This 177-nucleotide RNA was probed chemically with DMS.
[RMDB]
RNA sequence: GGGAACGACUCGAGUAGAGUCGAAAAAUUAGACCACCGAAAGGUGAUGUGGUAGGGGGGCGUGCUAUAUGGAUAGAAGUUUCUUCGAGAGGAGGGAUGGACCGUAUAGUAUCGCGGAUCCUGGUAACAAAAUGCUCUUGUUCGCAAGAGCAUUUUGAAAAGAAACAACAACAACAAC
Reactivity to DMS in 0.01 (KOAc 150mM, MgCl2 10mM, bicine 150mM(pH8.5), 24C), signal-to-noise 2, nucleotides 027 to 126: a080u010u000a050g010a080c020c000a010c000c000g010a090a040a180g010g060u000g010a030u000g020u010g010g020u010a080g020g000g000g000g030g030c030g050u000g020c010u000a010u000a040u000g000g030a200u010a100g030a190a200g000u010u000u000c000u000u000c010g000a250g000a270g000g000a040g010g000g000a000u000g000g000a110c020c010g010u000a010u000a010g020u000a010u010c030g010c000g020g000a080u010c030c000u000g010g030u000a060a110

For DMS the reverse transcriptase was MarathonRT. Conditions: 150 mM KOAc, 10 mM MgCl2 and 150 mM bicine (pH 8.5), 24 C.